Chemical mapping of a 177-nucleotide RNA with DMS. The RNA was probed in 150 mM KOAc, 10 mM MgCl2 and 150 mM bicine (pH 8.5) at 24 C. It was measured as part of the RMDB library TTRINS. The DMS profile rests on 762 reads.

[RMDB]
RNA sequence: GGGAACGACUCGAGUAGAGUCGAAAAGAUAUGGAUCGCGAUGAGUCACUCCUCGUUGAUCGUACCAACGCUUCGGAAACGAAGCGUUGGUACGGGAGAGGCCCGGGUGACGAGCGAUCCUAAGUCACUAGAAGACCUAGUUCGCUAGGUCUUCUAGAAAAGAAACAACAACAACAAC
Reactivity to DMS in 0.01 (KOAc 150mM, MgCl2 10mM, bicine 150mM(pH8.5), 24C), signal-to-noise 1, nucleotides 027 to 126: g030a130u010a300u010g000g000a020u000c000g040c020g000a190u030g020a230g000u000c000a010c010u000c000c010u000c000g020u000u020g040a150u000c000g000u000a000c000c000a000a000c030g000c000u000u000c000g030g000a100a050a300c000g030a050a050g040c000g000u000u000g000g020u010a000c000g020g040g010a030g010a030g000g060c300c210c180g000g000g030u000g000a000c000g010a150g030c000g010a000u010c010c010u030a000a060g010u010c090a140